The record gives the reactivity of an RNA of 207 nucleotides to 2A3.
Values are in units of 0.01, from 0 to 300, in steps of 10.

RNA sequence: GGGAACGACUCGAGUAGAGUCGAAAACGGUAUUGGUCAAGGCUAUACCGACAGCGCACCUUCAAAAGCGCGCUUAAUCCCCGGCCAAGCGCCGAAAUAUGAAUAGACACCGCUGGGCUGGUAGGGCAAAACAUGGCGAUCUUCGGAUCGCCAUGAACCCCUACAACAUCUUCGGAUGUUGUAGGGGAAAAGAAACAACAACAACAAC
Reactivity to 2A3 in 0.01 (KOAc 150mM, MgCl2 10mM, bicine 150mM(pH8.5), 24C), signal-to-noise 1, nucleotides 027 to 156: c010g010g010u030a040u060u190g020g000u070c120a160a220g160g000c010u000a010u000a000c020c000g020a010c050a020g010c000g010c010a050c040c070u160u180c070a110a170a040a080g010c020g040c000g000c000u020u010a040a040u040c010c000c000c000g000g010c000c000a070a020g050c030g020c030c070g070a060a060a000u290a070u080g030a090a030u080a090g040a030c010a020c120c000g000c030u030g000g040g000c020u010g020g020u070a050g060g000g010c070a030a030a070a000c010a050u000g000g000c000g000a010u000c010u020u030c010g060g020a000u000c000g000c000c000a000u000g000a010a010
The RNA was probed in 150 mM KOAc, 10 mM MgCl2 and 150 mM bicine (pH 8.5) at 24 C.